This 177-nucleotide RNA was probed chemically with 2A3 and DMS. The reactions ran in a buffer of 150 mM KOAc, 10 mM MgCl2 and 150 mM bicine (pH 8.5), at 24 C. 2A3 adducts were read by reverse transcription with SuperScript II with manganese.
RNA sequence: GGGAACGACUCGAGUAGAGUCGAAAAAAGGGAAUCACCGUGGAGCAUGCCCGCGAAAUCAUGAACGAUGCCACAUAUUUCGGCACCAUGCUGGUGCACAACUGUCAUGCCGACGGCAUGGUAUCGGACUAGUCGUAAAUUUCGAUUUACGACUAGUAAAAGAAACAACAACAACAAC
Reactivity to 2A3 in 0.01 (KOAc 150mM, MgCl2 10mM, bicine 150mM(pH8.5), 24C), signal-to-noise 9, nucleotides 027 to 126: a000a000g120g020g030a070a060u080c040a030c080c010g020u050g030g010a040g020c030a040u050g020c010c030c030g020c020g040a040a040a020u140c100a060u100g040a050a020c040g030a020u050g030c030c010a040c020a030u120a100u050u080u060c020g020g000c020a010c010c010a030u130g050c070u120g040g060u120g030c020a020c020a120a190c060u130g050u170c020a040u070g020c020c020g130a130c060g030g010c010a010u020g000g000u020a030u030c010g000g010
Reactivity to DMS in 0.01 (KOAc 150mM, MgCl2 10mM, bicine 150mM(pH8.5), 24C), signal-to-noise 8, nucleotides 027 to 126: a060a050g010g000g010a100a070u020c040a100c030c020g010u020g010g000a070g010c070a050u020g000c060c020c040g010c070g000a040a050a050u020c100a040u010g000a070a100c040g010a040u000g000c030c020a090c070a060u030a100u010u010u010c010g000g010c050a030c050c030a050u020g000c090u000g010g010u010g020c060a050c190a060a080c090u010g000u010c080a170u010g000c020c040g010a120c110g000g000c090a030u000g000g010u000a010u010c030g000g000